Conditions: 150 mM KOAc, 10 mM MgCl2 and 150 mM bicine (pH 8.5), 24 C.
An RNA of 177 nucleotides, treated with DMS and 2A3 and read out base by base.
Reactivities are given for positions 27 through 126.
For DMS, 15,263 sequencing reads were counted.
[RMDB]
RNA sequence: GGGAACGACUCGAGUAGAGUCGAAAAUUAUGCUGAGCCUAAGUAAAUUUAAUCUCCAUGGCCCGCUGAAGUCCUCCCACGAGAUGAAUAUUUAAGCAAAUUAUACCCAUUGCCGCACUGCUGGCCAGGAUCAUUUAAUAUUCGUAUUAAAUGAUCCAAAAGAAACAACAACAACAAC
Reactivity to DMS in 0.01 (KOAc 150mM, MgCl2 10mM, bicine 150mM(pH8.5), 24C), signal-to-noise 6, nucleotides 027 to 126: u030u020a060u010g000c020u010g000a160g010c030c040u010a080a110g020u010a030a060a080u020u020u000a090a070u000c020u010c010c120a090u020g000g010c040c010c020g010c050u000g010a090a090g010u010c030c030u010c010c020c010a100c190g000a050g000a070u010g010a050a060u030a060u010u010u020a080a060g010c040a030a030a070u010u020a100u020a090c010c000c010a090u010u020g000c030c030g010c070a070c040u010g010c040u010g010g010c030c140a110
Reactivity to 2A3 in 0.01 (KOAc 150mM, MgCl2 10mM, bicine 150mM(pH8.5), 24C), signal-to-noise 9, nucleotides 027 to 126: u090u030a090u140g020c020u040g030a060g040c010c030u090a130a040g030u090a080a100a120u090u100u120a090a080u050c040u010c050c030a080u080g030g000c000c010c020g030c040u050g030a060a010g040u020c010c010u020c010c020c000a040c040g060a070g000a050u110g050a100a050u110a140u130u190u140a090a010g030c020a030a040a050u140u060a100u140a110c000c010c020a040u050u120g020c010c010g020c030a060c100u060g020c020u040g020g010c000c010a030